[RMDB]
RNA sequence: GGGAACGACUCGAGUAGAGUCGAAAAUCGCUAAGCUUCGGCUUAGCGAAAAGUCGCGGCUUGAGGGCGUCUACGGCUGCGCACACACACGACCCUCAAGCCAAAGCAUCGUGUUCGCACGAUGCAACCAUUACCGUAGGUUCGCCUACGGUAAUGGAAAAGAAACAACAACAACAAC
Reactivity to DMS in 0.01 (KOAc 150mM, MgCl2 10mM, bicine 150mM(pH8.5), 24C), signal-to-noise 6, nucleotides 027 to 126: u000c010g010c000u000a010a010g010c000u000u020c220g030g010c000u000u000a000g000c000g000a000a010a060a110g010u010c040g030c250g000g000c000u010u000g000a020g010g000g010c010g000u000c080u000a100c160g000g020c070u010g000c080g020c070a090c120a050c140a120c230a030c010g000a110c020c000c000u000c010a020a020g010c010c010a010a040a090g010c000a000u000c000g020u000g010u000u010c180g020c010a010c000g010a010u000g020c000a060a080
Reactivity to 2A3 in 0.01 (KOAc 150mM, MgCl2 10mM, bicine 150mM(pH8.5), 24C), signal-to-noise 5, nucleotides 027 to 126: u020c000g000c000u000a000a000g000c010u030u160c260g100g000c000u000u020a000g000c000g000a000a000a000a010g020u030c040g010c100g090g000c000u000u010g000a000g010g010g010c010g000u000c070u090a060c050g050g000c040u160g070c110g050c040a050c000a000c000a000c000a000c100g300a300c000c000c000u010c000a000a000g000c000c000a010a010a000g000c000a000u010c000g000u000g030u040u090c250g020c070a000c000g000a000u000g000c010a000a030